[RMDB]
RNA sequence: GGGAACGACUCGAGUAGAGUCGAAAAGGCUUCGCGGUGCACGACACCCUCAACCCCGACCGUAUCGUCCUUGGGGUACAAGAUGAUUCGACGCGCGCCGAGGUAGCCGUCCGCGAGCUGUACGCGCCACAGGAGGUGUGUUCGCACACCUCCUGUGAAAAGAAACAACAACAACAAC
Reactivity to 2A3 in 0.01 (KOAc 150mM, MgCl2 10mM, bicine 150mM(pH8.5), 24C), signal-to-noise 7, nucleotides 027 to 126: g020g010c010u040u020c030g000c010g030g010u050g010c040a020c080g040a020c020a060c030c020c020u030c020a040a050c000c000c000c020g010a020c020c030g160u210a150u300c110g040u120c030c080u080u170g030g000g030g010u080a070c050a030a080g030a070u160g010a060u090u150c060g000a030c040g030c000g000c000g000c060c020g010a030g060g080u050a010g030c000c010g010u020c000c000g010c010g010a020g000c080u070g020u060a030c090g000c000g020c030
Reactivity to DMS in 0.01 (KOAc 150mM, MgCl2 10mM, bicine 150mM(pH8.5), 24C), signal-to-noise 4, nucleotides 027 to 126: g000g000c030u000u000c040g020c000g000g040u020g000c020a070c060g030a120c040a130c100c090c050u020c110a160a060c010c000c000c000g010a080c060c130g040u040a060u040c190g000u000c040c260u010u010g000g000g030g010u020a070c190a140a070g000a080u020g000a120u020u030c120g000a110c010g030c080g010c020g000c010c020g010a030g000g020u000a000g020c020c000g000u000c000c000g000c000g000a050g000c020u000g000u010a070c060g010c020g010c060
The record gives the reactivity of an RNA of 177 nucleotides to 2A3 and DMS. The data come from the RNA Mapping Database (RMDB), library OK1LIB. The RNA was probed in 150 mM KOAc, 10 mM MgCl2 and 150 mM bicine (pH 8.5) at 24 C.